Structure probing data (DMS and 2A3) for a 177-nucleotide construct. For DMS, 5,767 sequencing reads were counted.

RNA sequence: GGGAACGACUCGAGUAGAGUCGAAAAUCGUGCCCGUUCGCGGGCACGAGUCACCUUCACCGCUUCCAGUCUGGGCCACUACCUCUCUAUGAGAUCUCAGUAUAUUUGGUCAGUUCGCUGACCAAAAAUUAGAAUAAAGAUUCGUCUUUAUUCUAAUAAAAGAAACAACAACAACAAC
Reactivity to DMS in 0.01 (KOAc 150mM, MgCl2 10mM, bicine 150mM(pH8.5), 24C), signal-to-noise 5, nucleotides 027 to 126: u000c000g040u000g010c000c010c000g030u000u010c190g030c020g020g000g000c000a010c010g000a010g010u000c110a110c030c020u000u010c060a070c060c030g000c050u000u000c030c030a060g010u000c030u000g020g010g020c040c030a050c060u000a060c050c020u000c020u000c040u010a080u010g010a130g000a050u000c020u000c040a130g010u000a110u010a140u000u000u000g010g000u000c000a010g000u000u000c210g020c000u000g000a020c000c000a000a000a020a070
Reactivity to 2A3 in 0.01 (KOAc 150mM, MgCl2 10mM, bicine 150mM(pH8.5), 24C), signal-to-noise 2, nucleotides 027 to 126: u010c010g000u010g030c020c040c000g030u050u060c280g010c020g080g000g060c000a000c000g000a000g000u000c020a080c030c000u020u110c080a080c030c030g030c040u040u000c050c010a040g020u020c040u050g000g030g000c020c010a040c030u030a040c010c010u000c010u040c000u040a060u150g030a050g010a060u030c040u050c040a070g080u110a080u010a060u300u050u040g000g000u010c000a010g020u030u050c140g010c110u010g000a000c000c010a000a040a000a000
Record summary: Source: RMDB library M2PK50, as collected in RNAgym. Conditions: 150 mM KOAc, 10 mM MgCl2 and 150 mM bicine (pH 8.5), 24 C. For DMS the reverse transcriptase was MarathonRT. DMS (dimethyl sulfate) methylates the pairing face of unpaired adenines and cytosines.